[RMDB]
RNA sequence: GGGAACGACUCGAGUAGAGUCGAAAAGAUAUGGAGACCCAUUUGCAAAAAGCUUACAUCGGAAACGAUGUCAAGCUAAGUAUUGAUGCUCCUAAGUCAAACCCCGCCCACUUCGGUGGGCGGGGAACGUGAAUGAAUAGUUCGCUAUUCAUUCACGAAAAGAAACAACAACAACAAC
Reactivity to 2A3 in 0.01 (KOAc 150mM, MgCl2 10mM, bicine 150mM(pH8.5), 24C), signal-to-noise 2, nucleotides 027 to 126: g000a020u050a000u080g020g000a040g040a080c050c060c010a030u090u060u160g060c060a080a140a180a280a060g010c000u000u000a010c010a010u000c020g000g010a000a030a000c010g000a000u010g000u090c120a000a000g010c000u020a060a060g030u030a010u060u070g090a090u220g050c000u020c000c000u030a020a020g010u020c030a050a030a300c000c010c000c050g040c100c020c010a020c000u060u080c150g140g000u020g000g000g040c070g060g000g000g000a030a000
Reactivity to DMS in 0.01 (KOAc 150mM, MgCl2 10mM, bicine 150mM(pH8.5), 24C), signal-to-noise 2, nucleotides 027 to 126: g000a010u000a050u010g000g000a040g000a120c100c300c020a080u000u010u020g010c150a040a180a100a080a040g000c000u010u000a010c000a000u000c010g000g000a020a010a060c000g020a020u000g020u000c300a000a000g010c000u020a040a130g010u000a000u000u000g020a120u010g000c020u000c000c000u000a010a120g010u010c020a080a100a230c000c020c000c000g030c000c020c000a020c000u000u000c190g050g030u030g030g000g070c040g000g000g020g000a000a000